[RMDB]
RNA sequence: GGGAACGACUCGAGUAGAGUCGAAAACGAAGGUGUGGCAGGAAUUGGUGGGAGAGACAGACACGCAGGUCAGAGGCCACGGUCCUCACUGAGUGAUGGACAGUCCCGUUUCUGGGAGACGACAGCAACCCCUACUUGGAUUCGUCCAAGUAGGGGUAAAAGAAACAACAACAACAAC
Reactivity to 2A3 in 0.01 (KOAc 150mM, MgCl2 10mM, bicine 150mM(pH8.5), 24C), signal-to-noise 1, nucleotides 027 to 126: c050g050a070a040g110g060u080g050u090g070g000c020a030g050g110a170a110u100u140g050g020u050g000g100g020a110g010a000g010a030c060a000g030a010c000a010c050g000c030a000g000g070u060c020a060g020a040g040g020c020c000a030c080g020g050u090c000c000u070c030a050c000u090g100a050g130u030g030a080u120g020g000a020c010a010g090u060c000c000c040g000u050u100u040c060u080g010g030g020a080g010a010c060g000a010c000a020g010c020a080
Reactivity to DMS in 0.01 (KOAc 150mM, MgCl2 10mM, bicine 150mM(pH8.5), 24C), signal-to-noise 4, nucleotides 027 to 126: c120g020a130a080g020g020u020g010u010g000g020c070a100g000g000a060a080u000u000g020g020u010g010g000g010a080g010a090g020a090c100a050g010a100c070a060c090g000c100a060g000g020u010c090a070g010a120g000g010c020c110a070c130g000g020u010c010c000u000c000a060c020u000g010a110g020u020g000a060u010g020g010a060c030a120g000u000c000c010c040g020u010u000u000c050u010g010g000g010a100g000a040c060g020a040c050a090g000c160a140
An RNA of 177 nucleotides, treated with 2A3 and DMS and read out base by base. For 2A3 the reverse transcriptase was SuperScript II with manganese. Reactivities are given for positions 27 through 126.